[RMDB]
RNA sequence: GGGAACGACUCGAGUAGAGUCGAAAAGAGCGAUUAGACAAAGGCGUAGAGCUACAUAUUAGAUAGCUGUAUAAUCGUUCAAGUUACAUCAAAACAUCUUCAAUAUUUAUUACUUACUUUCCUUUCUGCCAGAGUACGGUAUUCGUACCGUACUCAAUUCUCGUGAUAGUUUCGACUAUCACGAGAAAAAAGAAACAACAACAACAAC
Reactivity to 2A3 in 0.01 (KOAc 150mM, MgCl2 10mM, bicine 150mM(pH8.5), 24C), signal-to-noise 4, nucleotides 027 to 156: g030a000g020c010g010a010u020u030a020g010a060c090a100a140a040g020g040c030g080u110a040g010a010g120c030u050a010c020a060u300a150u120u170a080g160a280u030a020g010c000u010g000u070a060u030a000a000u010c010g000u000u000c020a000a010g020u040u090a060c060a090u140c070a040a110a060a070c040a080u090c090u300u080c060a120a100u060a130u140u150u100a090u160u070a090c020u060u040a040c010u040u070u070c020c000u040u110u130c060u120g050c040c020a030g000a000g000u000a000c000g000g010u000a000u000u060c110g010u000a010c000c000g000u000a000c000u000c010a000a000
Reactivity to DMS in 0.01 (KOAc 150mM, MgCl2 10mM, bicine 150mM(pH8.5), 24C), signal-to-noise 1, nucleotides 027 to 156: g030a040g080c010g040a030u000u000a060g010a100c080a140a130a230g030g010c050g020u010a110g000a040g020c010u000a000c060a130u000a230u030u020a170g020a230u000a000g000c000u000g010u000a090u000a000a020u000c010g000u000u000c000a090a090g000u010u000a100c040a140u010c070a120a070a050a120c050a060u000c050u000u010c020a080a100u010a100u000u000u000a100u010u010a040c060u000u010a030c050u000u000u000c010c030u020u010u000c080u000g020c100c090a160g000a040g010u010a010c000g000g030u030a030u000u000c290g020u010a010c030c010g020u000a000c000u000c010a050a030
An RNA of 207 nucleotides, treated with 2A3 and DMS and read out base by base. The reactions ran in a buffer of 150 mM KOAc, 10 mM MgCl2 and 150 mM bicine (pH 8.5), at 24 C. Reactivities are given for positions 27 through 156. The 2A3 profile rests on 1,729 reads. In probing experiments dimethyl sulfate is read out at A N1 and C N3, which are open when not base-paired. The data come from the RNA Mapping Database (RMDB), library M2RFPK. As a SHAPE reagent, 2A3 marks flexible, mostly unpaired nucleotides at the ribose 2'-OH. The DMS profile rests on 1,788 reads.